This 177-nucleotide RNA was probed chemically with 2A3.
RNA sequence: GGGAACGACUCGAGUAGAGUCGAAAAUGGAGUACAUGAUGCCGCCCGCUUUUGACAACGCGUUGCCGGAGUGUGGCCAGAUGAUGACGUUAGAUUCAUCGGUAAAGCGGCGGCCGUGUUGAUCAAUACCGGAAGGUAACUUCGGUUACCUUCCGGUAAAAGAAACAACAACAACAAC
Reactivity to 2A3 in 0.01 (KOAc 150mM, MgCl2 10mM, bicine 150mM(pH8.5), 24C), signal-to-noise 2, nucleotides 027 to 126: u230g000g030a060g000u020a000c050a110u120g080a150u180g110c000c000g020c000c070c000g000c000u110u030u000u060g060a090c020a060a000c080g100c040g110u070u050g040c040c050g170g070a250g010u170g040u070g080g030c070c120a070g030a060u020g000a000u000g040a030c180g020u220u090a040g050a040u020u020c000a020u000c000g050g000u030a020a000a000g000c000g010g000c000g010g000c000c000g010u000g060u010u060g020a140u040c010a010a020u040
The 2A3 profile rests on 731 reads.